[RMDB]
RNA sequence: GGGAACGACUCGAGUAGAGUCGAAAACUUAGGCAACUUGGCCACAAGUUACUCACCAAGGAUAAGCAUAUCAAAAUGGAGUAUGCAAGGUCCAAGUUAUAUGUCACUAAAGAUUUAAUUGACCAUCCCUUCCCCGUGGGUUCGCCCACGGGGAAGGAAAAGAAACAACAACAACAAC
Reactivity to 2A3 in 0.01 (KOAc 150mM, MgCl2 10mM, bicine 150mM(pH8.5), 24C), signal-to-noise 1, nucleotides 027 to 126: c000u000u000a120g000g080c000a000a000c000u000u040g000g060c040c010a060c060a250a070g000u000u000a000c000u140c120a140c060c140a000a000g080g000a040u060a040a000g140c120a160u000a000u000c020a000a000a000a300u140g000g040a050g040u000a000u060g000c050a060a000g040g000u070c000c000a000a000g000u090u000a080u000a000u060g040u000c160a150c290u300a180a100a000g040a120u000u250u300a000a120u170u140g160a100c060c000a000u120c000